This 207-nucleotide RNA was probed chemically with DMS and 2A3. Values cover nucleotides 27 to 156. 2A3 adducts were read by reverse transcription with SuperScript II with manganese. For 2A3, 574 sequencing reads were counted. Source: RMDB library OK3TST, as collected in RNAgym.
RNA sequence: GGGAACGACUCGAGUAGAGUCGAAAAAGAGGUAGAUGCACACUAGAUGCAAAGACCGAGAUGCCAGAUGGGAGAAACAAGCCCGGCCAAGCCAGUGCCAACCCAGGCUGUAAAGAUAUCCUUCCCUCACCUCUUUCGCCGGUGAUGGGUAGAGAAACAUCGUGACUAUAUUCGUAUAGUCACGAUGAAAAGAAACAACAACAACAAC
Reactivity to DMS in 0.01 (KOAc 150mM, MgCl2 10mM, bicine 150mM(pH8.5), 24C), signal-to-noise 1, nucleotides 027 to 156: a050g000a140g010g010u000a040g060a200u000g000c030a020c030a280c050u020a210g040a130u000g020c000a120a050a190g050a060c000c020g000a030g020a100u000g020c070c000a080g020a130u000g030g000g010a030g000a160a100a140c030a100a190g010c060c000c020g030g060c100c040a070a200g030c080c060a040g010u000g010c080c020a150a160c180c020c000a230g000g000c020u020g010u000a040a080a110g000a220u000a080u000c080c000u000u000c020c000c030u000c010a020c010c020u000c080u000u000u000c080g000c100c110g000g060u000g020a080u000g010g030g000u010a040g000a120g010a070a020a200
Reactivity to 2A3 in 0.01 (KOAc 150mM, MgCl2 10mM, bicine 150mM(pH8.5), 24C), signal-to-noise 1, nucleotides 027 to 156: a000g070a050g010g010u040a070g000a260u030g010c050a010c020a000c080u170a030g000a210u000g000c000a120a090a000g020a010c000c020g010a010g010a050u070g000c010c020a040g070a190u170g000g010g010a080g050a030a100a010c040a000a090g010c010c090c070g000g000c010c010a010a000g010c000c050a020g040u060g120c020c000a000a050c060c050c040a030g060g010c010u030g080u060a080a130a000g030a060u110a090u120c000c000u010u040c000c010c010u050c000a030c030c010u090c070u070u300u210c140g060c130c040g000g000u040g050a120u240g010g020g000u000a020g050a010g020a070a040a000